Conditions: 150 mM KOAc, 10 mM MgCl2 and 150 mM bicine (pH 8.5), 24 C. Structure probing data (2A3 and DMS) for a 177-nucleotide construct. High DMS reactivity at an A or C suggests that its Watson-Crick edge is free. DMS adducts were read by reverse transcription with MarathonRT. Values cover nucleotides 27 to 126. Source: RMDB library OK2TRN, as collected in RNAgym. For 2A3 the reverse transcriptase was SuperScript II with manganese.
RNA sequence: GGGAACGACUCGAGUAGAGUCGAAAAGAAUACUCAGACAACGCCCAGACUUUGGAGAGCGCCACAUUGCGUUAUUCCUUAAAUCCCAAUGGGUGAAGAAAAAUGAGAAAAUCGGCGCAGUCAACGACAGCGUCAGUAGUUUCGACUACUGACGCUGAAAAGAAACAACAACAACAAC
Reactivity to 2A3 in 0.01 (KOAc 150mM, MgCl2 10mM, bicine 150mM(pH8.5), 24C), signal-to-noise 1, nucleotides 027 to 126: g020a020a120u090a050c020u020c000a030g050a140c050a090a090c010g010c000c030c000a000g040a090c080u020u090u010g010g000a040g020a010g000c000g000c020c010a150c070a300u110u180g000c020g010u040u020a190u130u040c000c000u010u090a110a030a080u080c000c010c000a000a050u050g000g020g030u010g020a050a050g050a020a040a020a010a020u080g000a010g040a050a060a000a130u110c060g020g000c020g000c070a000g080u130c110a080a020c030g060a010
Reactivity to DMS in 0.01 (KOAc 150mM, MgCl2 10mM, bicine 150mM(pH8.5), 24C), signal-to-noise 2, nucleotides 027 to 126: g030a070a070u010a070c070u000c010a120g000a150c090a020a120c040g010c000c000c000a090g000a150c070u000u000u000g000g010a010g020a040g020c010g030c000c300a180c210a080u030u000g000c010g010u000u000a060u020u020c000c020u020u000a050a140a150u000c030c010c010a170a130u000g010g000g030u000g000a070a080g000a050a050a060a120a090u000g000a040g000a030a020a110a120u000c040g000g000c020g030c120a040g010u010c080a070a100c120g010a120